[RMDB]
RNA sequence: GGGAACGACUCGAGUAGAGUCGAAAACAAUUGAGCGUCGCACACACACAGACUAAGUCUGACACUCACAGAGCCUAAACCGCUCUGUCAGUGUGCGAGAUAUCGUUCUUAAUGUGAGCAGAGGAAAGUAAAAGUUGUAGUUCGCUACAACUUUUACAAAAGAAACAACAACAACAAC
Reactivity to 2A3 in 0.01 (KOAc 150mM, MgCl2 10mM, bicine 150mM(pH8.5), 24C), signal-to-noise 7, nucleotides 027 to 126: c020a030a130u090u140g030a030g030c030g060u030c020g010c010a010c000a010c000a000c000a010c020a030g010a020c030u180a230a050g020u000c010u020g040a050c010a010c060u060c000a010c000a000g000a000g000c010c000u040a060a050a050c010c000g000c000u000c000u000g000u000c010a020g010u000g000u010g040c010g030a000g010a010u120a030u100c040g040u100u000c010u040u130a170a120u100g040u040g070a040g020c050a040g040a060g070g100a130a090a050
Reactivity to DMS in 0.01 (KOAc 150mM, MgCl2 10mM, bicine 150mM(pH8.5), 24C), signal-to-noise 7, nucleotides 027 to 126: c060a110a120u010u000g010a040g010c050g010u000c030g010c020a060c030a030c050a120c200a170c130a020g010a010c010u000a110a170g020u000c000u000g000a100c120a030c080u000c130a040c010a010g000a010g010c010c020u010a050a090a110c300c300g000c000u000c000u010g000u000c120a040g010u000g000u010g010c030g000a020g010a080u000a140u000c060g020u010u000c010u000u000a110a110u000g010u010g010a080g010c040a080g020a050g000g010a080a100a080
Conditions: 150 mM KOAc, 10 mM MgCl2 and 150 mM bicine (pH 8.5), 24 C. The record gives the reactivity of an RNA of 177 nucleotides to 2A3 and DMS. DMS adducts were read by reverse transcription with MarathonRT. For 2A3, 13,940 sequencing reads were counted.